Structure probing data (2A3) for a 207-nucleotide construct. The reactions ran in a buffer of 150 mM KOAc, 10 mM MgCl2 and 150 mM bicine (pH 8.5), at 24 C. Reactivities are given for positions 27 through 156. The 2A3 profile rests on 919 reads.
RNA sequence: GGGAACGACUCGAGUAGAGUCGAAAAUGGGCUACCAGUAAGCGAAAAAUGAUACAGGACGAAAAAAACAUAAUUCGAGAUUUUUCAGGAUGGAUUUUUUUAGUUAUCUAUCAAAACUAUUCUGAUGCAACGUAGAGCACGUUCGCGUGCUCUACAAGUUUCCUCUUGUGUUCGCACAAGAGGAAACAAAAGAAACAACAACAACAAC
Reactivity to 2A3 in 0.01 (KOAc 150mM, MgCl2 10mM, bicine 150mM(pH8.5), 24C), signal-to-noise 2, nucleotides 027 to 156: u090g000g030g000c040u050a040c010c020a010g050u090a100a000g040c040g090a060a060a020a030a060u060g060a040u050a080c100a070g020g100a050c040g060a000a070a000a020a000a010a010c090a020u170a120a090u080u120c030g040a020g000a220u180u260u050u100u050c030a000g000g000a000u000g020g000a010u000u000u010u000u000u000u000a020g020u070u170a100u150c010u000a000u030c000a000a000a020a000c010u030a040u040u000c000u020g010a020u040g020c030a050a040c130g000u010a000g000a000g000c010a000c000g000u040u040c080g000c000g040u040g000c000u000c010u000a000c000a000a000